[RMDB]
RNA sequence: GGGAACGACUCGAGUAGAGUCGAAAACUAGAUCUAGUGCAGUAGCACACCCACUAACCACCAGUGGGUCCUUCACACCAUUCUUUAACUCUGCUUGUUUGAAUAGUGAGCCAUUAUUGAAGGAUGAACGGGGCCUAAGUUUCGACUUAGGCCCCGUAAAAGAAACAACAACAACAAC
Reactivity to 2A3 in 0.01 (KOAc 150mM, MgCl2 10mM, bicine 150mM(pH8.5), 24C), signal-to-noise 1, nucleotides 027 to 126: c040u040a000g090a220u080c010u070a030g010u000g020c000a140g100u300a090g030c040a050c000a000c030c000c000a010c000u040a050a090c030c070a050c060c000a020g000u130g000g020g030u000c000c000u020u070c000a010c090a090c060c050a040u000u100c000u060u130u010a030a000c000u000c000u000g180c020u280u220g200u180u050u110g070a200a010u060a100g080u030g030a010g140c000c000a030u070u090a010u000u190g070a170a190g040g050a040u040g050a000
The record gives the reactivity of an RNA of 177 nucleotides to 2A3. Values cover nucleotides 27 to 126. For 2A3 the reverse transcriptase was SuperScript II with manganese. Source: RMDB library OK1LIB, as collected in RNAgym.